[RMDB]
RNA sequence: GGGAACGACUCGAGUAGAGUCGAAAAUACUGGACUACACGCUCUGGUGCCAAGACGUAUGGUGACAUCGUUAUAAAAUCUUUUGCCUAGACUCGUUCUAGAGCAGAUAAGACAACCUCAACAGAAAAUCGUAUGCGGAUUUCGAUCCGCAUACGAUAAAAGAAACAACAACAACAAC
Reactivity to 2A3 in 0.01 (KOAc 150mM, MgCl2 10mM, bicine 150mM(pH8.5), 24C), signal-to-noise 3, nucleotides 027 to 126: u060a030c070u020g020g020a020c040u060a040c020a000c040g010c010u010c010u040g010g000u010g000c030c000a000a040g140a010c030g070u120a040u170g010g000u050g000a040c010a030u160c070g010u090u050a040u120a160a080a050a050u060c000u020u050u030u000g000c010c000u000a000g000a000c020u070c300g120u220u030c060u000a010g000a030g010c000a020g000a010u140a010a010g020a010c060a020a150c010c030u090c040a030a100c020a030g140a060a170a020
Reactivity to DMS in 0.01 (KOAc 150mM, MgCl2 10mM, bicine 150mM(pH8.5), 24C), signal-to-noise 1, nucleotides 027 to 126: u000a090c080u060g000g010a060c000u000a000c060a030c140g000c160u000c040u000g000g040u000g040c010c070a090a070g000a040c080g000u000a040u000g000g000u000g000a050c070a040u040c010g020u070u000a170u100a040a150a050a210u000c000u000u000u000u010g000c000c000u000a080g120a000c000u050c270g000u070u000c000u050a010g000a230g040c000a000g000a000u000a020a000g000a010c190a170a010c140c000u000c070a040a000c220a070g010a110a030a070

Record summary:
This 177-nucleotide RNA was probed chemically with 2A3 and DMS. Reactivities are given for positions 27 through 126. The data come from the RNA Mapping Database (RMDB), library RFM100. The reactions ran in a buffer of 150 mM KOAc, 10 mM MgCl2 and 150 mM bicine (pH 8.5), at 24 C. The DMS profile rests on 946 reads. Reactivities are rounded to 0.1 and cut off at 0 and 3.